RNA sequence: GGGAACGACUCGAGUAGAGUCGAAAACAUGGAUCAUGCUGAAGGGCCUGGAAACGCUUUCGGUGCGCGUGCGCCAGCAGACGCAAUCGGCUGCCGCAAUCGCCGACUUCCUUGCAGGCAAGCCGGAGUACUGAUAUCAGUUCGCUGAUAUCAGUACAAAAGAAACAACAACAACAAC
Reactivity to DMS in 0.01 (KOAc 150mM, MgCl2 10mM, bicine 150mM(pH8.5), 24C), signal-to-noise 8, nucleotides 027 to 126: c090a100u010g010g010a080u000c060a060u010g010c040u010g010a110a110g000g000g020c030c020u000g010g000a080a070a080c150g000c070u000u000u000c050g010g010u000g020c150g020c100g010u010g010c050g020c120c030a050g010c050a050g000a060c110g020c170a090a180u010c010g010g010c000u000g000c150c010g000c040a030a060u000c080g010c030c030g000a040c170u000u000c030c040u000u010g010c040a090g020g010c040a040a080g010c020c020g010g010a250
Reactivity to 2A3 in 0.01 (KOAc 150mM, MgCl2 10mM, bicine 150mM(pH8.5), 24C), signal-to-noise 6, nucleotides 027 to 126: c020a060u100g070g000a070u100c050a060u140g030c030u060g050a090a090g060g030g020c000c020u040g040g050a080a110a010c050g010c010u020u100u080c030g050g000u060g010c100g000c020g060u070g010c020g000c010c010a010g000c020a020g040a070c050g000c110a030a100u090c020g020g000c010u030g010c000c000g000c010a020a060u080c030g000c050c000g000a010c010u070u040c020c010u030u050g020c050a070g030g000c040a060a020g020c010c010g020g000a060